[RMDB]
Conditions: 150 mM KOAc, 10 mM MgCl2 and 150 mM bicine (pH 8.5), 24 C.
Chemical mapping of a 170-nucleotide RNA with DMS and 2A3.
2A3 adducts were read by reverse transcription with SuperScript II with manganese.
Values cover nucleotides 27 to 129.
The data come from the RNA Mapping Database (RMDB), library 15KLIB.
The 2A3 profile rests on 7,842 reads.
RNA sequence: GGGAACGACUCGAGUAGAGUCGAAAACAGGUAUAGCUAUAUCUGUUAAACCAGAGAGUACAGCUGAUCAAGAGACUUAUGGUGGAGCUUCAGUGUGUCUCUAUUGCCGUGCGCAUAUAGAACAUCCAGGGAGUGGUCUUCGGACCACUCAAAAGAAACAACAACAACAAC
Reactivity to DMS in 0.01 (KOAc 150mM, MgCl2 10mM, bicine 150mM(pH8.5), 24C), signal-to-noise 3, nucleotides 027 to 129: c000a000g050g000u040a010u080a170g050c180u020a090u000a020u050c030u030g000u000u000a030a100a120c030c010a100g010a070g020a000g050u010a040c130a000g000c030u030g040a110u010c080a060a060g030a090g030a070c000u010u050a100u040g050g020u030g060g020a070g040c070u010u000c040a000g040u100g030u020g000u050c100u010c030u050a060u020u040g000c000c060g070u050g000c190g000c010a000u000a010u000a000g000a070a010c040a040u020c050c080a120g000g000
Reactivity to 2A3 in 0.01 (KOAc 150mM, MgCl2 10mM, bicine 150mM(pH8.5), 24C), signal-to-noise 5, nucleotides 027 to 129: c010a000g030g000u010a020u000a020g140c190u060a020u030a030u070c000u000g020u030u070a090a000a000c010c010a010g020a000g000a010g050u070a030c030a020g000c030u040g010a040u080c080a070a010g050a010g050a090c030u060u060a050u170g030g000u010g010g030a030g000c000u040u010c040a040g030u030g010u010g020u090c030u000c000u110a040u020u060g010c010c040g180u170g050c150g000c020a020u100a010u020a170g060a040a010c010a040u000c020c010a010g060g090